[RMDB]
RNA sequence: GGGAACGACUCGAGUAGAGUCGAAAAGACGCGGGCGGCGAGUACGCGUUCCGCGUGCGCGGCGAAGACCACAUGUGGACGCCCGAUUCGAUCGCGAAGCUGCAGCAUGCGACGCGCGGCAACUCGACCUAUAAUGAGGUUUCGACCUCAUUAUAGGAAAAGAAACAACAACAACAAC
Reactivity to 2A3 in 0.01 (KOAc 150mM, MgCl2 10mM, bicine 150mM(pH8.5), 24C), signal-to-noise 8, nucleotides 027 to 126: g070a010c030g010c020g040g020g000c020g040g020c030g020a030g040u080a050c040g000c000g030u100u060c050c010g010c010g010u010g000c080g000c030g020g010c040g080a120a020g070a090c020c020a050c030a150u190g050u110g140g010a040c050g020c030c050c010g010a030u120u130c090g130a160u060c030g000c040g070a090a020g010c040u060g000c030a070g010c010a030u090g020c030g040a050c030g020c010g000c010g030g000c020a030a070c010u020c030g050a070
Reactivity to DMS in 0.01 (KOAc 150mM, MgCl2 10mM, bicine 150mM(pH8.5), 24C), signal-to-noise 9, nucleotides 027 to 126: g010a080c060g010c030g010g000g010c060g010g020c020g020a090g020u010a060c080g010c000g000u000u000c090c020g010c010g030u000g010c020g000c060g010g010c020g020a130a120g010a180c030c030a130c100a100u000g030u000g010g010a180c060g010c040c060c030g000a090u000u010c090g010a080u000c040g020c070g010a100a190g010c010u000g010c040a150g020c040a050u000g000c020g010a100c070g000c030g000c030g010g000c120a060a070c020u000c020g000a300